[RMDB]
RNA sequence: GGGAACGACUCGAGUAGAGUCGAAAAGAAAGAAAGAACCCUUCCCGCGGGGCUGGAUCUUCCAGAUGGUGCGGGCCGGGACAAGCCGGAGUGUGUCCCGGUUUCAGAAACAACCUUCGGCAGCCAAACUAGACUACCCACUUCGGUGGGUAGUCAACUAUUAUCUCAUGUUCGCAUGAGAUAAUAGAAAAGAAACAACAACAACAAC
Reactivity to 2A3 in 0.01 (KOAc 150mM, MgCl2 10mM, bicine 150mM(pH8.5), 24C), signal-to-noise 2, nucleotides 027 to 156: g010a000a020a000g020a030a050a010g030a140a200c040c000c000u000u000c000c000c000g010c010g000g000g000g000c010u000g000g030a130u190c090u140u020c150c000a000g000a020u030g020g130u040g000c000g000g000g000c000c000g000g000g000a000c000a020a010g000c000c020g010g000a000g010u130g000u010g010u000c000c000c000g000g000u000u020u020c010a010g020a010a020a030c060a050a050c020c000u000u000c010g000g010c010a040g020c040c090a080a100a130c090u110a060g000a000c000u000a000c000c000c000a010c010u030u070c210g040g000u000g010g000g000u000a000g000u000c000a000a000
Structure probing data (2A3) for a 207-nucleotide construct. The reactions ran in a buffer of 150 mM KOAc, 10 mM MgCl2 and 150 mM bicine (pH 8.5), at 24 C. For 2A3 the reverse transcriptase was SuperScript II with manganese.